[RMDB]
RNA sequence: GGGAACGACUCGAGUAGAGUCGAAAAGAUAUGGAGCAAUCAUGGGACGAAGAACAAGUUCGGAAACGAACUUGGGAGUCCGACCAUGAGUUGCUCCUAAGUCAAAAGGAAGUCUUCGGACUUCCAAGUUAAUCACAUGGUUCGCCAUGUGAUUAACAAAAGAAACAACAACAACAAC
Reactivity to 2A3 in 0.01 (KOAc 150mM, MgCl2 10mM, bicine 150mM(pH8.5), 24C), signal-to-noise 2, nucleotides 027 to 126: g020a000u090a050u200g000g000a010g000c000a000a010u020c010a010u020g010g000g050a050c030g020a060a060g010a030a030c000a000a000g020u000u000c010g040g000a070a060a060c020g000a000a000c010u000u010g000g000g000a060g240u000c000c000g020a010c000c010a000u010g020a030g130u040u010g010c000u000c000c000u000a010a010g000u030c030a010a030a000a090g010g000a010a000g000u000c010u090u170c300g150g000a010c000u010u000c000c000a000a000
Reactivity to DMS in 0.01 (KOAc 150mM, MgCl2 10mM, bicine 150mM(pH8.5), 24C), signal-to-noise 5, nucleotides 027 to 126: g020a050u020a300u010g000g010a020g010c000a030a040u000c000a020u000g000g000g010a300c300g000a030a040g010a300a220c010a030a000g000u000u000c000g020g010a120a060a200c000g020a010a000c000u000u010g000g000g000a290g000u000c030c020g010a300c020c000a010u000g000a030g020u000u000g020c000u000c000c000u000a010a070g010u010c050a070a050a090a090g000g010a020a010g010u010c000u000u000c220g010g000a010c020u000u000c020c000a020a050